[RMDB]
RNA sequence: GGGAACGACUCGAGUAGAGUCGAAAAGAUCUUGGCCACCGCCGAAAACCUCGAAACCGUGGCCAUCGAUCCCUUGUCGAAGUACUGGAAUGGCUCACGCUCCGCCGGGUUGGCGCCGGCCAGUUCGUCCUCCUACCAUUUUCGAAUGGUAGGAGGAAAAAGAAACAACAACAACAAC
Reactivity to 2A3 in 0.01 (KOAc 150mM, MgCl2 10mM, bicine 150mM(pH8.5), 24C), signal-to-noise 2, nucleotides 027 to 126: g000a010u020c040u060u080g000g000c010c000a020c030c010g030c010c010g110a090a110a080a120c010c020u040c070g030a100a040a030c060c000g020u010g020g030c020c000a000u000c040g070a070u050c020c000c000u020u090g070u010c120g150a250a060g020u160a030c040u050g000g030a090a040u020g010g000c090u090c100a020c010g060c050u060c030c040g110c060c040g010g000g000u010u050g010g000c000g040c000c030g000g020c010c010a000g010u020u010c010g020
Reactivity to DMS in 0.01 (KOAc 150mM, MgCl2 10mM, bicine 150mM(pH8.5), 24C), signal-to-noise 3, nucleotides 027 to 126: g020a030u000c010u000u000g040g010c000c000a070c300c060g040c040c010g030a100a070a090a130c050c030u010c070g000a050a100a100c290c030g000u010g000g000c030c020a000u010c140g000a170u000c070c010c130u010u010g020u000c040g020a140a130g020u000a030c040u010g010g020a180a070u020g020g000c020u020c040a030c040g000c060u000c150c080g010c170c100g000g000g000u010u000g020g010c000g020c140c050g020g000c010c020a030g000u000u000c020g000
The record gives the reactivity of an RNA of 177 nucleotides to 2A3 and DMS.
For 2A3 the reverse transcriptase was SuperScript II with manganese.
DMS adducts were read by reverse transcription with MarathonRT.
The 2A3 profile rests on 2,358 reads.
The RNA was probed in 150 mM KOAc, 10 mM MgCl2 and 150 mM bicine (pH 8.5) at 24 C.
The DMS profile rests on 1,941 reads.